Chemical mapping of a 177-nucleotide RNA with DMS. Conditions: 150 mM KOAc, 10 mM MgCl2 and 150 mM bicine (pH 8.5), 24 C. DMS adducts were read by reverse transcription with MarathonRT. In probing experiments dimethyl sulfate is read out at A N1 and C N3, which are open when not base-paired. The data come from the RNA Mapping Database (RMDB), library RFM100.
[RMDB]
RNA sequence: GGGAACGACUCGAGUAGAGUCGAAAAUGUUCGUCAGCCGAGGGUUAGCCGAUCCUAAGGUCACCCCUAACAGGAAGUGAUCGAAAGGGAAGCUGGUUAAUAUUCCAGCGCCUCAGGUGUUUUGCCAAAUCGGGAUACGUUUCGACGUAUCCCGAUUAAAAGAAACAACAACAACAAC
Reactivity to DMS in 0.01 (KOAc 150mM, MgCl2 10mM, bicine 150mM(pH8.5), 24C), signal-to-noise 2, nucleotides 027 to 126: u000g010u010u010c040g000u020c160a110g020c000c040g020a110g000g000g000u000u010a120g000c110c040g010a130u010c000c060u010a080a160g000g030u000c000a000c020c040c000c000u000a110a140c300a140g000g000a080a170g010u000g000a000u020c010g000a040a110a000g010g000g020a060a170g100c020u000g000g010u000u040a020a130u020a050u000u010c010c010a000g000c000g020c100c000u000c110a120g000g020u010g000u000u000u010u030g020c210c160a030